[RMDB]
RNA sequence: GGGAACGACUCGAGUAGAGUCGAAAACGAUGUCAAACCGUUUUACAUCAAGAAACCUGUUGACAAUCUCUUCGCCCUGAUGCUGAUAUUAAAUCGGCUACGGGGUUGGGGAGUUGUCGGAGGUAUGUCAGAUCCACGCCUCUAUAAGGUGUGGGUAGGUUUCAACAUAGUUCGCUAUGUUGAAACCAAAAGAAACAACAACAACAAC
Reactivity to 2A3 in 0.01 (KOAc 150mM, MgCl2 10mM, bicine 150mM(pH8.5), 24C), signal-to-noise 5, nucleotides 027 to 156: c030g020a020u050g040u110c100a020a060a090c130c030g030u020u020u030u040a050c030a050u050c050a030a060g060a160a150a050c010c000u040g050u230u050g020a000c020a000a150u110c000u000c000u040u030c000g000c000c000c020u050g010a050u100g000c010u000g000a000u020a050u180u300a240a300a020u020c010g010g000c010u020a030c050g010g000g000g010u010u270g030g000g000g000a010g000u000u010g000u000c000g000g020a010g000g010u050a090u110g150u080c050a010g020a120u010c000c000a000c000g000c000c010u100c040u130a190u090a300a060g000g000u000g010u000g000g020g000u020a040
Reactivity to DMS in 0.01 (KOAc 150mM, MgCl2 10mM, bicine 150mM(pH8.5), 24C), signal-to-noise 1, nucleotides 027 to 156: c030g040a070u000g080u000c150a090a140a090c020c050g010u000u000u010u000a080c090a120u000c040a120a230g030a160a080a060c010c010u000g010u000u010g020a050c000a010a040u000c040u000c000u020u000c050g010c030c000c000u000g020a300u010g000c000u000g000a040u010a160u010u000a100a140a080u000c030g040g000c010u000a150c160g000g020g000g000u000u000g070g000g020g030a010g030u000u010g030u000c020g010g000a040g010g030u000a020u010g000u000c020a190g040a090u000c000c000a000c030g010c000c000u000c040u000a230u010a100a040g010g020u000g020u000g010g000g010u000a030